[RMDB]
RNA sequence: GGGAACGACUCGAGUAGAGUCGAAAAUAGAAAAAAGAUGCGACAUGACGCUAUCGAUAUCUACGCGAUUGGAUCUUGGUACUACGAUAAUUCUUGUGGGGUUUUCAUGAUCAGACUCGUCGCGCAGUGGACGAAUAACUUUCGAGUUAUUCGUCCAAAAAGAAACAACAACAACAAC
Reactivity to 2A3 in 0.01 (KOAc 150mM, MgCl2 10mM, bicine 150mM(pH8.5), 24C), signal-to-noise 3, nucleotides 027 to 126: u060a010g100a000a090a030a000a030a010g050a030u020g020c000g050a030c070a180u220g070a080c010g010c060u090a040u040c000g000a020u040a070u160c020u030a020c010g000c000g030a020u050u160g050g010a070u000c010u000u130g020g020u060a210c030u020a040c110g030a010u030a070a060u070u080c060u120u200g070u290g080g000g010g040u020u030u030u050c020a030u070g020a020u030c000a000g030a020c010u010c030g000u000c010g020c000g000c010a010g080
Reactivity to DMS in 0.01 (KOAc 150mM, MgCl2 10mM, bicine 150mM(pH8.5), 24C), signal-to-noise 4, nucleotides 027 to 126: u010a110g010a020a030a110a060a090a130g010a050u000g000c030g020a220c210a110u020g010a090c040g030c030u020a040u000c010g010a130u010a070u010c010u000a030c020g000c010g000a020u010u020g060g010a020u000c020u010u020g030g010u010a070c070u000a070c100g010a030u000a020a040u000u010c060u000u010g020u020g010g010g000g010u010u000u000u000c010a080u000g010a050u000c020a040g000a020c020u000c020g010u000c010g020c020g010c050a060g020